[RMDB]
RNA sequence: GGGAACGACUCGAGUAGAGUCGAAAACUCCACCUUGGGGUGCCCUAUCCGAGCACUGCUGUUUCGGUAGAAAGGCUAAGCACGUCGCAAUGACGUAAGGUGGGACUUUUCCCUCGAGUUCGAGCGGCAUUUUAAAUGCGUUCGCGCAUUUAAAAUGAAAAGAAACAACAACAACAAC
Reactivity to DMS in 0.01 (KOAc 150mM, MgCl2 10mM, bicine 150mM(pH8.5), 24C), signal-to-noise 5, nucleotides 027 to 126: c130u000c010c000a010c000c020u000u000g010g010g000g020u000g020c010c010c010u000a130u000c010c010g000a020g000c020a050c290u000g030c210u010g020u000u020u000c000g010g000u010a020g010a070a110a140g000g010c010u010a080a100g030c190a040c010g010u000c000g010c180a130a080u000g010a010c000g000u000a020a010g000g010u010g000g000g000a040c100u000u000u000u000c000c010c010u010c030g000a120g010u000u010c010g000a070g000c050g000g000
Reactivity to 2A3 in 0.01 (KOAc 150mM, MgCl2 10mM, bicine 150mM(pH8.5), 24C), signal-to-noise 4, nucleotides 027 to 126: c010u000c000c000a000c000c000u050u020g050g000g000g150u120g030c010c000c000u010a020u000c000c000g010a000g000c020a090c200u300g100c140u080g140u110u300u050c000g000g020u020a010g060a040a060a010g020g000c010u040a060a000g070c060a030c010g010u000c010g010c240a230a300u300g000a010c000g000u020a000a010g000g000u010g010g000g000a000c030u060u020u020u030c000c000c000u020c020g070a090g030u090u070c030g010a040g020c050g030g010
Structure probing data (DMS and 2A3) for a 177-nucleotide construct. As a SHAPE reagent, 2A3 marks flexible, mostly unpaired nucleotides at the ribose 2'-OH. For 2A3, 6,206 sequencing reads were counted.